[RMDB]
RNA sequence: GGGAACGACUCGAGUAGAGUCGAAAAGAUAUGGACGAAACCGACGAUAAGUCUCAGUCGGAAACGACUGAAGACUUUUGACGUCGUGUUUCGUCCUAAGUCAAAGCUGACACUUCGGUGUCAGCAACAGUGUAUCCGUCUUCGGACGGAUACACUGAAAAGAAACAACAACAACAAC
Reactivity to 2A3 in 0.01 (KOAc 150mM, MgCl2 10mM, bicine 150mM(pH8.5), 24C), signal-to-noise 2, nucleotides 027 to 126: g020a020u030a000u100g020g000a010c000g000a020a010a000c000c010g010a000c020g090a140u030a270a000g000u010c010u000c000a000g020u000c010g000g040a060a030a010c010g010a000c010u010g070a050a020g020a020c000u050u060u020u170g270a140c040g000u000c000g000u010g000u030u000u010c000g000u000c000c000u000a020a000g000u000c010a030a060a070g010c000u000g000a000c000a000c030u090u130c300g180g010u000g000u020c010a000g000c000a000a000
Reactivity to DMS in 0.01 (KOAc 150mM, MgCl2 10mM, bicine 150mM(pH8.5), 24C), signal-to-noise 2, nucleotides 027 to 126: g010a030u000a300u010g000g020a000c000g000a000a000a000c000c000g000a010c020g020a140u010a030a000g010u000c000u000c000a000g020u000c020g040g000a030a070a110c020g030a010c000u010g020a060a010g000a010c000u000u000u000u000g010a180c060g020u000c000g010u020g000u000u020u000c000g020u000c000c010u000a000a110g010u010c020a120a060a160g010c020u010g000a010c000a000c000u000u010c260g040g020u000g010u000c020a000g010c000a030a060
Record summary
Chemical mapping of a 177-nucleotide RNA with 2A3 and DMS. For 2A3 the reverse transcriptase was SuperScript II with manganese. It was measured as part of the RMDB library TTRDES. Reactivities are given for positions 27 through 126. The RNA was probed in 150 mM KOAc, 10 mM MgCl2 and 150 mM bicine (pH 8.5) at 24 C. For DMS the reverse transcriptase was MarathonRT.